[RMDB]
RNA sequence: GGGAACGACUCGAGUAGAGUCGAAAAGGUUUUGACAGGAUGUGUAAUGAUGUAUGUAAGCAUGCAGGCUCAUGGGAUGAGAGCCCUUGAAGAUAGUUCCGAAUCAUACUUGGCGAGUCUAACUACGCCAUGGCUGCUUUAUUUAGCGUAACGCUAGCAUACACCAUCUCUUCGGAGAUGGUGUAUGAAAAGAAACAACAACAACAAC
Reactivity to 2A3 in 0.01 (KOAc 150mM, MgCl2 10mM, bicine 150mM(pH8.5), 24C), signal-to-noise 6, nucleotides 027 to 156: g050g000u000u050u060u110g060a040c030a020g000g020a040u040g040u020g030u110a080a060u090g100a020u040g020u080a030u050g050u050a050a050g040c020a020u110g010c020a010g050g000c000u010c040a050u040g040g020g000a020u050g030a030g010a020g030c000c000c020u030u080g030a050a020g040a040u070a030g040u050u000c050c020g020a010a040u060c050a010u040a170c020u030u020g010g000c000g010a010g000u020c070u100a090a130c020u140a160c040g000c000c000a000u010g020g000c020u020g000c000u070u100u070a150u070u120u050a060g010c040g040u060a070a040c140g000c010u010a010g030
Reactivity to DMS in 0.01 (KOAc 150mM, MgCl2 10mM, bicine 150mM(pH8.5), 24C), signal-to-noise 3, nucleotides 027 to 156: g020g010u000u000u010u000g010a150c020a050g020g020a050u000g000u010g020u000a070a100u000g020a090u000g020u010a030u000g020u000a080a110g020c030a060u000g030c010a080g020g030c030u000c040a100u000g020g020g020a120u000g020a160g010a090g000c000c020c030u010u000g020a080a100g010a100u000a080g020u000u000c030c050g000a100a100u000c080a100u000a090c070u010u000g010g010c000g000a100g010u000c060u000a060a090c030u000a090c010g030c000c000a010u010g010g020c010u000g030c030u000u000u010a100u020u010u000a030g000c030g010u000a060a090c100g020c010u000a040g040

Structure probing data (2A3 and DMS) for a 207-nucleotide construct.
For 2A3 the reverse transcriptase was SuperScript II with manganese.
The reactions ran in a buffer of 150 mM KOAc, 10 mM MgCl2 and 150 mM bicine (pH 8.5), at 24 C.
DMS adducts were read by reverse transcription with MarathonRT.
Values cover nucleotides 27 to 156.